This 177-nucleotide RNA was probed chemically with DMS and 2A3. For DMS, 1,434 sequencing reads were counted. The RNA was probed in 150 mM KOAc, 10 mM MgCl2 and 150 mM bicine (pH 8.5) at 24 C.
[RMDB]
RNA sequence: GGGAACGACUCGAGUAGAGUCGAAAACUCUGCCCCAUAUCUCAUCAAAUUUGCCUUGUUGACAUCUUUGAGAAAUUCCGAUUUUGGCAUAUCCUUGUUCAUAUUCAAGAGGGGGUAGACGAUGGCCAUCCGUGCAUAGCUUCGGCUAUGCACGGAUAAAAGAAACAACAACAACAAC
Reactivity to DMS in 0.01 (KOAc 150mM, MgCl2 10mM, bicine 150mM(pH8.5), 24C), signal-to-noise 2, nucleotides 027 to 126: c240u000c010u000g000c000c010c000c070a210u010a090u090c040u000c090a180u000c040a010a000a090u000u000u010g030c180c050u000u020g000u080u020g010a170c020a020u050c010u000u000u000g000a000g020a170a060a150u070u020c060c090g000a050u010u000u010u040g000g030c160a020u080a100u090c170c090u000u080g040u020u000c050a090u000a020u000u000c110a070a040g000a100g000g020g000g000g010u000a000g000a060c090g000a040u010g010g040c010c020
Reactivity to 2A3 in 0.01 (KOAc 150mM, MgCl2 10mM, bicine 150mM(pH8.5), 24C), signal-to-noise 3, nucleotides 027 to 126: c020u000c020u020g030c010c000c030c000a150u140a210u240c000u000c010a150u050c060a030a020a050u040u000u000g030c000c000u100u060g110u110u090g030a010c010a020u000c050u050u060u110g030a040g120a050a080a110u220u040c030c040g060a090u130u140u050u100g040g000c000a020u080a070u180c050c070u010u000g000u050u140c040a040u140a110u220u040c000a020a020g010a110g090g000g000g000g010u000a020g000a000c030g030a060u210g070g060c000c000